[RMDB]
RNA sequence: GGGAACGACUCGAGUAGAGUCGAAAACGUCAAUUGAAUUCUCUAGCACUCGAAGCUUAUUGUCUUCAAUGUAAAAGAAAAGCUGGUCUAACAAGAUGACAACUAGAACAAAGGGCAGGGGCCAUACCACCCCAACUUGGUUCGCCAAGUUGGGGUGAAAAGAAACAACAACAACAAC
Reactivity to 2A3 in 0.01 (KOAc 150mM, MgCl2 10mM, bicine 150mM(pH8.5), 24C), signal-to-noise 3, nucleotides 027 to 126: c080g060u020c030a020a090u090u060g080a060a070u110u010c070u000c040u060a030g000c000a030c070u070c050g030a050a000g010c000u050u100a080u180u080g060u100c000u050u040c050a010a190u090g050u250a140a060a040a110g170a020a020a000a000g030c070u040g040g000u040c040u110a070a000c020a100a030g010a060u100g110a090c070a040a010c070u010a060g030a140a030c070a090a060a000g030g000g020c030a030g000g010g000g040c040c000a010u080a020c000
Reactivity to DMS in 0.01 (KOAc 150mM, MgCl2 10mM, bicine 150mM(pH8.5), 24C), signal-to-noise 1, nucleotides 027 to 126: c100g000u000c120a000a020u010u010g010a020a150u040u020c030u000c020u000a040g000c130a100c110u000c140g000a110a110g000c040u000u020a140u030u000g000u010c010u000u000c010a050a250u000g000u010a000a020a070a080g020a060a050a020a020g000c030u000g000g000u010c020u000a040a010c110a000a090g000a100u000g000a080c100a020a020c090u010a050g010a170a000c050a000a090a010g040g000g000c010a020g000g000g010g010c110c030a120u000a090c160